[RMDB]
Source information: An RNA of 177 nucleotides, treated with DMS and 2A3 and read out base by base. The RNA was probed in 150 mM KOAc, 10 mM MgCl2 and 150 mM bicine (pH 8.5) at 24 C. It was measured as part of the RMDB library M2PK90. The 2A3 profile rests on 9,336 reads. The DMS profile rests on 9,656 reads. Reactivities are rounded to 0.1 and cut off at 0 and 3.
RNA sequence: GGGAACGACUCGAGUAGAGUCGAAAAAAUAUGCUCGACAGGCUGCCUGUCCGACAGAGCUUUUAGAUCUUCUGAUCUUUCCCUGCAGCAUAUCGCUUAUGCAUCAAGCGAUAGUCGGAUCACACAAGGACAUUUCUAUAUUCGUAUAGAAAUGUCCAAAAGAAACAACAACAACAAC
Reactivity to DMS in 0.01 (KOAc 150mM, MgCl2 10mM, bicine 150mM(pH8.5), 24C), signal-to-noise 8, nucleotides 027 to 126: a070a070u000a040u000g000c010u000c020g010a110c180a100g010g010c040u010g010c020c200u010g010u010c000c010g010a020c020a090g000a030g000c040u010u000u000u000a010g000a020u000c000u000u010c300u010g000a010u000c000u000u000u000c000c000c000u000g010c040a030g000c020a280u000a010u000c000g000c010u000u010a090u010g020c230a100u010c140a030a010g010c000g010a000u000a010g000u000c020g010g010a150u000c210a090c170a070c210a090a090
Reactivity to 2A3 in 0.01 (KOAc 150mM, MgCl2 10mM, bicine 150mM(pH8.5), 24C), signal-to-noise 5, nucleotides 027 to 126: a000a020u280a070u100g000c010u020c030g070a070c040a060g040g070c020u010g020c000c050u100g080u030c010c000g000a000c010a020g010a000g000c000u020u020u020u020a010g000a000u010c010u250u060c180u300g010a010u000c000u010u020u000c000c000c010u020g000c020a010g000c010a030u010a000u040c000g010c020u030u040a060u260g180c070a110u170c100a030a010g000c000g000a000u010a010g010u020c010g010g010a070u100c060a060c010a020c020a130a110